[RMDB]
RNA sequence: GGGAACGACUCGAGUAGAGUCGAAAACCCUUCAGCCCGAGUUUCCUCAAACGCUACCGUAUGAGCGGAAUUGGGGGCGUCUUGUAGACGAGUUUGUCGCUUACCAUGAGCGGUCGGCGAAGGGCGGGCGGGGACUAGGUUUCGACCUGGUCUCUGUAAAAGAAACAACAACAACAAC
Reactivity to DMS in 0.01 (KOAc 150mM, MgCl2 10mM, bicine 150mM(pH8.5), 24C), signal-to-noise 2, nucleotides 027 to 126: c000c000c010u010u020c130a100g030c000c000c010g010a080g020u010u020u020c010c020u010c010a030a030a070c020g000c060u010a060c100c180g000u010a040u040g010a030g010c040g000g010a060a050u000u010g000g000g000g020g000c000g000u000c040u000u140g000u210a300g040a070c020g000a300g000u000u070u060g010u000c000g000c000u000u000a060c070c050a160u020g000a100g000c100g000g000u000c030g000g010c000g000a030a060g000g010g010c030g000g000
Reactivity to 2A3 in 0.01 (KOAc 150mM, MgCl2 10mM, bicine 150mM(pH8.5), 24C), signal-to-noise 3, nucleotides 027 to 126: c000c000c000u020u140c040a040g000c020c000c000g030a030g040u020u070u030c000c000u000c010a040a030a060c010g000c050u060a160c060c040g120u160a090u300g050a020g020c020g030g000a090a070u040u030g020g000g000g010g000c000g000u000c000u000u270g120u180a020g000a010c000g000a020g090u030u120u170g070u140c000g000c020u010u010a070c050c040a070u150g060a030g100c110g050g040u040c100g000g000c010g010a040a050g000g010g020c000g000g010
Chemical mapping of a 177-nucleotide RNA with DMS and 2A3. For DMS the reverse transcriptase was MarathonRT. The data come from the RNA Mapping Database (RMDB), library OK1LIB. Conditions: 150 mM KOAc, 10 mM MgCl2 and 150 mM bicine (pH 8.5), 24 C. For DMS, 8,224 sequencing reads were counted.